[RMDB]
An RNA of 207 nucleotides, treated with 2A3 and DMS and read out base by base. DMS adducts were read by reverse transcription with MarathonRT.

RNA sequence: GGGAACGACUCGAGUAGAGUCGAAAAGGACUGCGCAGUCCGGCAACAUCAGCAGAGAGCGCGCUAUACGUGACGGAUUGGCUGAAGCGUACAGAAAUAUUGAGCCUCCUGCAAGAGGCAGCCAAGCAAAACGUACGUGAGUUCGCUCACGUACGAACAUCAAUGCGGACUUCGGUCCGCAUUGAUGAAAAGAAACAACAACAACAAC
Reactivity to 2A3 in 0.01 (KOAc 150mM, MgCl2 10mM, bicine 150mM(pH8.5), 24C), signal-to-noise 3, nucleotides 027 to 156: g040g000a010c060u110g030c140g050c090a040g030u000c000c000g010g010c020a080a060c010a080u090c030a000g000c030a000g130a000g000a030g110c060g010c010g000c070u020a030u030a090c090g010u030g030a000c050g020g090a170u050u050g090g050c040u010g040a040a000g000c000g000u010a030c010a020g120a090a170a030u300a090u160u170g040a050g010c010c000u040c010c000u060g030c040a100a040g010a030g020g040c010a010g010c010c000a020a020g000c020a030a040a060a080c000g000u000a000c000g000u000g000a010g010u040u120c210g010c120u000c000a000c000g000u000a000c000g000a010a000
Reactivity to DMS in 0.01 (KOAc 150mM, MgCl2 10mM, bicine 150mM(pH8.5), 24C), signal-to-noise 1, nucleotides 027 to 156: g010g000a010c040u010g110c110g010c080a180g030u000c010c060g090g060c010a030a060c020a140u010c020a100g000c000a050g030a130g040a080g030c010g000c030g060c030u010a040u040a040c000g000u000g030a180c030g030g000a300u000u000g000g060c110u000g000a020a300g020c000g000u000a050c010a030g020a100a030a120u000a220u030u000g000a130g010c060c030u000c030c000u000g020c100a160a120g020a100g010g040c050a040g020c020c000a030a130g030c110a040a030a110a160c010g080u000a010c000g060u000g000a010g020u000u000c240g030c000u000c000a000c000g000u000a000c000g000a020a120

Background: The 2A3 profile rests on 1,634 reads.